[RMDB]
RNA sequence: GGGAACGACUCGAGUAGAGUCGAAAAAGCCGGUCUACGGACCGGCAAAACGUGCAUCUCGUUUUACGGGCCGCAUUAAGAUUGAAGCCAAGGAACGGGGACUUCAGACUACGACUACGGUCGUAGAUUACGCCUCCGAGUUUCGACUCGGAGGCAACAUCUCUUAUAAGUUCGCUUAUAAGAGAUGAAAAGAAACAACAACAACAAC
Reactivity to 2A3 in 0.01 (KOAc 150mM, MgCl2 10mM, bicine 150mM(pH8.5), 24C), signal-to-noise 1, nucleotides 027 to 156: a010g000c000c000g000g000u000c000u020a100c270g050g010a010c000c000g020g000c000a000a000a000a000c040g050u100g010c070a120u040c030u000c030g030u040u040u060u100a030c080g020g010g040c030c000g070c020a030u140u140a070a080g070a120u050u070g050a060a010g010c020c020a000a100g030g020a030a090c080g000g000g000g080a020c030u100u040c070a060g020a130c010u000a000c010g020a000c020u060a010c200g060g000u000c010g010u000a000g000a000u030u130a010c090g000c000c000u020c000c020g040a000g040u100u130u080c080g080a020c040u000c000g000g000a000g010g000c000a000a000
Reactivity to DMS in 0.01 (KOAc 150mM, MgCl2 10mM, bicine 150mM(pH8.5), 24C), signal-to-noise 1, nucleotides 027 to 156: a210g000c020c010g020g010u000c000u000a080c220g030g030a020c020c000g050g000c040a000a010a010a020c050g050u000g010c110a170u000c040u000c010g010u010u000u010u020a070c070g020g000g020c040c000g000c030a020u000u010a120a140g000a170u020u000g000a030a020g020c010c000a090a110g010g020a110a120c000g050g010g000g010a050c060u020u000c030a070g000a230c000u000a010c020g010a060c010u000a140c260g080g000u000c000g020u000a010g010a140u010u000a120c110g030c030c000u010c000c000g020a040g000u000u010u020c300g010a100c020u000c000g000g060a020g020g020c010a000a020